The record gives the reactivity of an RNA of 207 nucleotides to 2A3 and DMS. 2A3 adducts were read by reverse transcription with SuperScript II with manganese. The DMS profile rests on 5,858 reads. It was measured as part of the RMDB library OK3TST. For 2A3, 5,469 sequencing reads were counted. The RNA was probed in 150 mM KOAc, 10 mM MgCl2 and 150 mM bicine (pH 8.5) at 24 C.

RNA sequence: GGGAACGACUCGAGUAGAGUCGAAAACGAGGACAGCAAUCGCCGCCAGUGCGCGGACGCCCGUUCGGCGGUCUCUGAGGUCGGUCCACGCGCUGCCAUCUAAUAUGAGUGUGAGGACGGUUGGGUGGUCCUCAAAUUCGCGAUGGAAUGCAACCGGGAUAGAUUAUAAUUUCGAUUAUAAUCUAUCAAAAGAAACAACAACAACAAC
Reactivity to 2A3 in 0.01 (KOAc 150mM, MgCl2 10mM, bicine 150mM(pH8.5), 24C), signal-to-noise 7, nucleotides 027 to 156: c060g020a160g020g020a060c040a070g060c060a100a150u100c070g000c030c000g000c020c030a130g100u080g070c080g020c020g010g010a030c010g030c010c000c010g030u070u040c030g030g030c030g060g100u040c070u000c040u140g060a090g040g070u080c050g030g040u020c020c000a030c030g030c010g000c020u040g030c000c020a040u020c040u150a140a180u170a210u300g030a050g050u070g000u020g040a070g010g020a040c040g040g020u070u110g060g030g160u110g040g000u010c000c000u000c000a000a030a000u050u040c020g010c040g030a020u050g010g060a090a060u130g030c030a030a070c080c020g080g030
Reactivity to DMS in 0.01 (KOAc 150mM, MgCl2 10mM, bicine 150mM(pH8.5), 24C), signal-to-noise 2, nucleotides 027 to 156: c090g000a090g010g020a090c030a120g000c020a070a050u000c030g010c010c020g020c070c010a180g040u000g000c070g020c020g000g010a080c060g020c040c030c030g020u000u010c040g000g020c030g030g000u010c050u000c040u010g020a100g020g020u010c040g020g020u000c010c000a010c000g020c060g040c030u010g000c060c010a050u000c030u000a100a170u000a120u010g010a090g030u000g030u000g000a090g020g010a030c010g020g000u000u000g020g020g000u000g020g000u010c000c010u000c010a010a030a060u010u010c020g010c090g020a110u000g010g000a140a140u000g010c010a040a270c030c020g000g000